[RMDB]
RNA sequence: GGGAACGACUCGAGUAGAGUCGAAAAGAUAUGGACCAACGAGGGAGCUACCGUCGGAAACGACGGAAUAGCGACGAUCUCGUUGGUCCUAAGUCAAAAGGGUCCUUGCGUUCGCGCAAGGACCCAACUUUAUGGCAUAGUUCGCUAUGCCAUAAAGAAAAGAAACAACAACAACAAC
Reactivity to DMS in 0.01 (KOAc 150mM, MgCl2 10mM, bicine 150mM(pH8.5), 24C), signal-to-noise 1, nucleotides 027 to 126: g000a000u000a030u000g000g000a010c000c000a000a000c000g020a040g000g000g000a010g020c000u010a090c000c000g000u000c010g010g010a010a000a010c000g000a000c010g000g000a030a070u000a000g000c000g040a090c300g010a020u000c020u010c000g000u000u000g010g000u000c000c000u010a000a050g000u010c000a120a110a130a120g000g020g000u000c000c020u000u000g000c030g040u000u010c300g030c030g010c000a030a010g000g020a000c000c000c010a000a000
Structure probing data (DMS) for a 177-nucleotide construct. Values cover nucleotides 27 to 126. Source: RMDB library TTRDES, as collected in RNAgym. The RNA was probed in 150 mM KOAc, 10 mM MgCl2 and 150 mM bicine (pH 8.5) at 24 C. The DMS profile rests on 4,790 reads.